[RMDB]
RNA sequence: GGGAACGACUCGAGUAGAGUCGAAAACAAAAGAGCUUAAGCCGAUUAUUAAAUCGACUCCUUCAAUCAUUCACGGAACGAAGGAUCUCUUUACGAGAUUAAGCCAAUUGCGUAUAGACCCCAAACGGGGUUUCAGACAAUUCGUUGUCUGAAACCCAAAAGAAACAACAACAACAAC
Reactivity to 2A3 in 0.01 (KOAc 150mM, MgCl2 10mM, bicine 150mM(pH8.5), 24C), signal-to-noise 4, nucleotides 027 to 126: c010a000a050a000a010g060a030g020c000u000u000a000a000g000c000c010g000a000u010u040a160u070u300a160a150a010u000c000g020a010c000u000c000c000u000u010c010a000a150u020c000a100u190u250c100a040c220g160g020a040a010c040g000a000a000g000g010a000u000c000u000c010u030u240u140a140c180g010a000g000a000u000u000a000a000g000c020c000a030a090u050u030g010c010g020u110a030u050a150g110a090c000c000c010c010a090a030a100c050g020
Reactivity to DMS in 0.01 (KOAc 150mM, MgCl2 10mM, bicine 150mM(pH8.5), 24C), signal-to-noise 2, nucleotides 027 to 126: c040a030a120a110a240g000a140g030c000u000u000a000a000g000c010c000g000a000u010u000a040u090u100a120a050a000u000c000g000a000c010u000c000c000u000u000c000a060a250u000c010a090u030u070c300a060c300g000g000a010a240c300g020a000a020g030g000a020u000c000u010c010u030u020u070a130c200g000a000g010a000u000u000a020a000g000c000c000a120a190u000u000g020c110g020u000a120u030a080g020a120c030c000c000c090a050a040a080c300g000